[RMDB]
RNA sequence: GGGAACGACUCGAGUAGAGUCGAAAAUUCGGUCCUGAAGAUCGGCCGGAACACGUGCGGGUACCGCUCGGCGUACUCACGGAUGAUCGCCGGGGUGGCAUCGGUCGACGCGUCGUCGGCGACGAUGUCCUGCCGAUAUGUUCGCAUAUCGGCAGGAAAAAGAAACAACAACAACAAC
Reactivity to 2A3 in 0.01 (KOAc 150mM, MgCl2 10mM, bicine 150mM(pH8.5), 24C), signal-to-noise 4, nucleotides 027 to 126: u070u010c020g040g010u010c010c030u090g050a060a030g030a070u040c020g060g000c010c020g050g000a030a020c050a010c050g110u240g140c030g000g000g040u080a140c020c100g050c020u010c010g000g010c000g020u060a070c020u040c070a140c050g120g030a070u080g010a020u130c020g020c020c000g000g000g010g050u050g040g000c030a020u010c030g060g020u020c010g000a030c000g030c050g210u200c050g030u050c010g010g050c010g010a010c000g000a010u030g040
Reactivity to DMS in 0.01 (KOAc 150mM, MgCl2 10mM, bicine 150mM(pH8.5), 24C), signal-to-noise 5, nucleotides 027 to 126: u010u010c050g020g030u000c000c040u000g010a130a130g010a050u000c020g010g000c000c030g010g010a080a080c150a040c040g020u010g020c040g020g000g020u000a060c140c110g000c040u000c020g000g010c020g020u000a090c140u010c050a150c110g020g010a110u000g000a060u010c020g020c190c010g000g000g010g030u000g010g000c040a010u000c010g020g010u000c030g010a030c020g000c100g010u010c140g010u000c000g010g010c020g000a070c020g000a030u000g000
Structure probing data (2A3 and DMS) for a 177-nucleotide construct. For DMS, 6,244 sequencing reads were counted. Reactivities are given for positions 27 through 126. 2A3 adducts were read by reverse transcription with SuperScript II with manganese. Conditions: 150 mM KOAc, 10 mM MgCl2 and 150 mM bicine (pH 8.5), 24 C.